[RMDB]
RNA sequence: GGGAACGACUCGAGUAGAGUCGAAAAGAAGAGAAUACAAGGCUGACAAAACCCUGUCCCGACCUCCACGUGGUGUCGGCUGGAUACUGCUGCAUUAUGUUGCAUUUAUCAACUGGGAAGGAGAAGAGAUGGUGGGCUAUUUCGAUAGCCCACCAUCAAAAGAAACAACAACAACAAC
Reactivity to DMS in 0.01 (KOAc 150mM, MgCl2 10mM, bicine 150mM(pH8.5), 24C), signal-to-noise 1, nucleotides 027 to 126: g000a090a040g000a210g000a070a050u060a140c190a080a020g030g000c030u040g010a100c040a040a100a060a050c010c040c080u000g000u000c100c030c000g000a030c010c000u010c110c060a080c140g020u020g000g030u000g000u000c010g020g000c200u000g030g010a020u010a010c210u000g000c000u040g000c010a130u050u040a010u030g000u000u000g000c000a040u000u110u000a050u010c010a040a040c110u030g000g000g000a040a000g030g060a030g010a180a110g000a180
Reactivity to 2A3 in 0.01 (KOAc 150mM, MgCl2 10mM, bicine 150mM(pH8.5), 24C), signal-to-noise 2, nucleotides 027 to 126: g160a050a030g110a000g090a100a030u090a130c070a020a110g030g000c030u030g000a010c030a030a060a010a080c000c010c000u010g040u000c020c010c000g040a030c000c000u100c020c010a140c120g050u240g000g000u010g010u040c010g010g000c010u040g020g000a000u030a030c010u040g020c000u020g020c010a070u110u140a060u300g000u000u030g010c050a050u000u020u170a090u060c020a020a000c040u070g000g020g000a070a050g040g020a090g050a120a020g060a000

An RNA of 177 nucleotides, treated with DMS and 2A3 and read out base by base. For 2A3, 1,258 sequencing reads were counted. In probing experiments dimethyl sulfate is read out at A N1 and C N3, which are open when not base-paired.